[RMDB]
RNA sequence: GGGAACGACUCGAGUAGAGUCGAAAACUUGAGCCGAGGGGCGAUGCGGAAACGGCAGGAAUGCGCAUUCCGGAAACGACAGCAGCAGAGCCCGCUAUACGUGAAGGAUUGGCUGAAGCGUAUUGAACUUCUAUAUUGUCUUCGGACAAUAUAGAAGAAAAGAAACAACAACAACAAC
Reactivity to 2A3 in 0.01 (KOAc 150mM, MgCl2 10mM, bicine 150mM(pH8.5), 24C), signal-to-noise 9, nucleotides 027 to 126: c030u060u130g040a020g030c020c020g050a080g020g010g000g000c020g060a070u040g010c020g000g020a050a060a040c020g020g000c030a020g030g040a050a030u120g130c140g000c180a020u020u000c000c000g010g020a040a050a000c020g050a020c020a030g040c020a000g010c010a010g040a010g050c000c000c010g000c000u020a030u010a010c030g020u060g070a060a020g080g050a170u140u200g130g030c020u030g010a050a000g000c020g010u020a040u020u100g050a060a040
Reactivity to DMS in 0.01 (KOAc 150mM, MgCl2 10mM, bicine 150mM(pH8.5), 24C), signal-to-noise 9, nucleotides 027 to 126: c040u010u010g010a080g010c010c030g010a090g020g000g000g010c020g010a110u010g010c010g000g000a070a030a040c040g010g000c220a250g000g020a030a020u000g020c230g010c130a120u000u000c000c000g000g000a040a030a030c030g000a070c180a170g000c080a110g000c070a090g000a300g010c010c000c000g010c050u010a030u010a030c030g000u010g000a170a110g000g010a300u020u020g000g010c010u000g010a170a190g000c020g010u000a040u000u010g010a130a170